[RMDB]
Chemical mapping of a 207-nucleotide RNA with 2A3. The reactions ran in a buffer of 150 mM KOAc, 10 mM MgCl2 and 150 mM bicine (pH 8.5), at 24 C.
RNA sequence: GGGAACGACUCGAGUAGAGUCGAAAAAGGUAUGGACACCUAAACUCAGUGACUUGUCCAAAGUCUGCUGCUCUUAAGUGGUAGUGCUAGGCUCAAUCCCAGCUUCCUGGAUGUCAAGUUCAAGGGUCUAAGAGGAGGUGGGCGUAGGAAGUCUCAACAUCACCAUCCGAUUCGUCGGAUGGUGAUGAAAAGAAACAACAACAACAAC
Reactivity to 2A3 in 0.01 (KOAc 150mM, MgCl2 10mM, bicine 150mM(pH8.5), 24C), signal-to-noise 2, nucleotides 027 to 156: a010g030g000u120a050u060g030g000a030c020a020c010c040u040a050a050a060c100u120c150a050g070u050g110a100c030u110u090g040u090c030c010a010a020a000g000u000c020u070g030c030u010g020c010u030c010u150u200a120a090g020u050g190g000u090a010g030u060g060c020u040a080g030g000c040u040c110a050a060u110c030c000c000a010g040c000u100u050c030c010u050g050g020a100u070g030u090c040a020a000g010u020u030c030a070a050g040g000g000u000c020u070a040a070g010a060g040g020a010g030g040u230g010g000g000c060g030u040a040g000g040a080a010g010u020c030u030c050a040a000